[RMDB]
RNA sequence: GGGAACGACUCGAGUAGAGUCGAAAAGCCAAAAGGAGCGCCCGGCGGAUCCGGCCGGGCGGGAAAAGAAAGCGCGUCGAUGAAAAGCCGGCUGGCCCAGGAAAGCGCAUGGCGUGAAGUAUGGCCGGCAUGAAUCGAUAUUCGUAUCGAUUCAUGCAAAAGAAACAACAACAACAAC
Reactivity to 2A3 in 0.01 (KOAc 150mM, MgCl2 10mM, bicine 150mM(pH8.5), 24C), signal-to-noise 1, nucleotides 027 to 126: g050c010c000a000a050a060a140g060g050a130g110c000g000c000c000c000g000g000c010g020g050a200u090c100c040g060g020c000c000g000g000g000c000g000g010g000a010a000a000a010g140a030a090a040g050c060g010c060g060u050c020g050a050u100g070a010a000a000a150g010c040c010g030g060c040u040g020g010c000c000c040a020g090g000a150a060a010g060c030g000c000a010u020g050g000c010g020u010g010a070a010g070u100a150u180g020g030c030c000g020
Reactivity to DMS in 0.01 (KOAc 150mM, MgCl2 10mM, bicine 150mM(pH8.5), 24C), signal-to-noise 2, nucleotides 027 to 126: g000c010c010a090a150a150a110g010g010a300g000c000g050c000c000c000g040g000c010g020g010a120u010c250c220g000g030c020c000g010g030g060c000g000g000g000a080a010a160a140g010a130a100a100g000c040g020c080g010u000c050g010a050u020g000a100a100a110a140g000c020c030g000g000c030u010g010g000c060c020c070a090g000g000a110a030a160g000c070g000c050a040u010g000g000c020g060u040g000a060a090g000u020a070u020g000g000c020c010g000